Description
This 177-nucleotide RNA was probed chemically with 2A3. 2A3 adducts were read by reverse transcription with SuperScript II with manganese. Source: RMDB library OK1LIB, as collected in RNAgym. Conditions: 150 mM KOAc, 10 mM MgCl2 and 150 mM bicine (pH 8.5), 24 C.
RNA sequence: GGGAACGACUCGAGUAGAGUCGAAAAGUUUGACGAGCUUGGUCAAUGAUAGUAAUUUCUUCAUCGCAUUCCCUGACGAUUUCGAGAAGAAUUACUUAGAGCGGGCGAAUGAAUUGAACUGGGUCAAGAAAGCAGCGGGAUUCGUCCCGCUGCUUUCAAAAGAAACAACAACAACAAC
Reactivity to 2A3 in 0.01 (KOAc 150mM, MgCl2 10mM, bicine 150mM(pH8.5), 24C), signal-to-noise 1, nucleotides 027 to 126: g000u030u050u170g120a040c120g070a060g000c010u010u150g110g060u100c000a090a250u070g080a010u050a000g000u010a030a040u000u180u170c030u020u020c000a220u030c030g000c040a030u010u000c070c010c070u170g070a050c000g070a070u140u160u170c130g040a020g020a020a000g000a000a000u000u000a000c000u000u000a010g000a000g060c010g000g000g000c090g090a030a090u070g000a070a090u050u080g000a070a000c050u190g000g120g000u020c100a080a000